Record summary: This 177-nucleotide RNA was probed chemically with 2A3 and DMS.

RNA sequence: GGGAACGACUCGAGUAGAGUCGAAAAACAUCUUUAAUAUGCUUACGCAAACCUUGGUGAGCAAUACUUGUAGCAUCCAUCAUAAUGACAACUGGACCACCGCCUAGUUUACUAUCGCUCGUUUGACCAUCUUAGGGCGAUUCGUCGCCCUAAGAUGAAAAGAAACAACAACAACAAC
Reactivity to 2A3 in 0.01 (KOAc 150mM, MgCl2 10mM, bicine 150mM(pH8.5), 24C), signal-to-noise 1, nucleotides 027 to 126: a000c000a040u000c050u100u180u170a100a040u160a010u180g010c020u020u000a020c040g030c110a090a120a170c040c030u010u180g000g000u000g000a040g020c000a000a050u070a090c040u050u110g070u100a030g000c030a020u050c010c000a060u020c040a030u030a260a050u080g050a010c020a060a040c120u050g010g080a080c050c000a020c040c000g000c020c030u010a040g000u030u000u070a040c030u030a020u060c000g000c080u020c030g000u000u040u180g050a020c020
Reactivity to DMS in 0.01 (KOAc 150mM, MgCl2 10mM, bicine 150mM(pH8.5), 24C), signal-to-noise 2, nucleotides 027 to 126: a060c140a080u000c030u000u000u000a090a110u000a080u010g000c000u000u000a090c030g020c150a060a090a140c210c070u000u000g000g000u000g010a100g000c000a060a110u000a070c140u000u010g000u000a050g020c060a070u000c040c090a040u000c110a040u030a040a080u000g000a100c120a060a050c130u000g010g040a020c030c020a030c100c030g000c010c000u010a050g010u000u000u000a030c110u000a070u000c040g020c110u000c020g000u010u010u000g040a150c160